RNA sequence: GGGAACGACUCGAGUAGAGUCGAAAAAUGGUGGCAUGUGCCUGUGGUCCCAGCUACUUGGGAAGCUGAGGCAGAAGGAUCACUUGAGCCUGGGAGCUCAAGACUGCAGUGAGCUGUGAUUGUGCCAUGGCCCCUCUUAAUUCGUUAAGAGGGGCCAAAAAGAAACAACAACAACAAC
Reactivity to 2A3 in 0.01 (KOAc 150mM, MgCl2 10mM, bicine 150mM(pH8.5), 24C), signal-to-noise 1, nucleotides 027 to 126: a000u110g110g010u030g020g000c000a040u030g040u030g120c030c000u010g110u230g090g060u000c000c000c000a000g000c090u110a100c060u070u160g080g000g060a020a050g020c010u030g010a080g000g000c070a030g050a140a040g060g030a060u060c020a010c080u010u030g000a010g060c090c030u180g060g220g090a130g030c000u000c000a000a000g060a080c060u090g050c000a100g010u060g150a010g050c000u000g010u030g040a030u050u050g000u000g010c000c000a030
Reactivity to DMS in 0.01 (KOAc 150mM, MgCl2 10mM, bicine 150mM(pH8.5), 24C), signal-to-noise 2, nucleotides 027 to 126: a070u020g000g030u000g010g010c000a060u010g020u000g030c000c020u020g010u000g010g000u000c010c000c000a020g000c070u000a110c060u020u010g010g010g010a120a080g020c020u000g010a070g020g010c020a070g000a200a060g000g010a080u010c070a130c000u000u000g000a040g010c000c000u020g010g020g010a150g020c020u000c010a010a010g010a160c090u000g030c040a080g000u000g010a100g010c000u000g000u000g000a060u000u000g020u000g000c020c000a120